An RNA of 177 nucleotides, treated with DMS and 2A3 and read out base by base. The data come from the RNA Mapping Database (RMDB), library OK2TRN. Conditions: 150 mM KOAc, 10 mM MgCl2 and 150 mM bicine (pH 8.5), 24 C. 2A3 is a SHAPE reagent: it acylates the 2'-hydroxyl of flexible nucleotides of all four kinds. The DMS profile rests on 1,248 reads. For DMS the reverse transcriptase was MarathonRT.
RNA sequence: GGGAACGACUCGAGUAGAGUCGAAAACACUCUUUCAUUUAAUCUUCACAACUCGAUGAGGGGCAAUAUAUCUCCAGUUCACAGGCAAAGAAAUGGAGGCUGUAAGAGGUUAUGUGACCUCCGUCACAUCCCUUUGACGGUUCGCCGUCAAAGGGAUAAAAGAAACAACAACAACAAC
Reactivity to DMS in 0.01 (KOAc 150mM, MgCl2 10mM, bicine 150mM(pH8.5), 24C), signal-to-noise 2, nucleotides 027 to 126: c050a160c040u000c000u020u000u020c040a100u020u000u000a120a260u000c020u000u020c030a040c080a060a120c170u010c110g010a140u000g010a080g000g000g000g040c230a020a040u000a090u020a100u000c000u000c030c000a040g000u000u000c020a080c090a120g000g010c220a050a090a090g000a020a010a050u000g010g000a020g010g020c210u000g010u000a040a040g020a090g010g010u010u010a040u010g010u010g000a040c030c110u000c090c100g000u000c060a050c080
Reactivity to 2A3 in 0.01 (KOAc 150mM, MgCl2 10mM, bicine 150mM(pH8.5), 24C), signal-to-noise 2, nucleotides 027 to 126: c010a020c000u000c000u000u120u060c020a070u050u050u110a060a030u010c010u050u030c030a040c010a170a180c160u070c080g140a190u020g020a050g010g000g010g060c020a030a020u070a010u000a030u110c000u000c000c000a010g000u060u000c020a040c030a100g210g000c040a120a100a050g020a040a050a010u030g000g010a010g030g020c010u040g030u030a050a010g000a020g010g000u040u030a030u080g070u040g010a040c020c000u000c020c030g040u030c000a000c020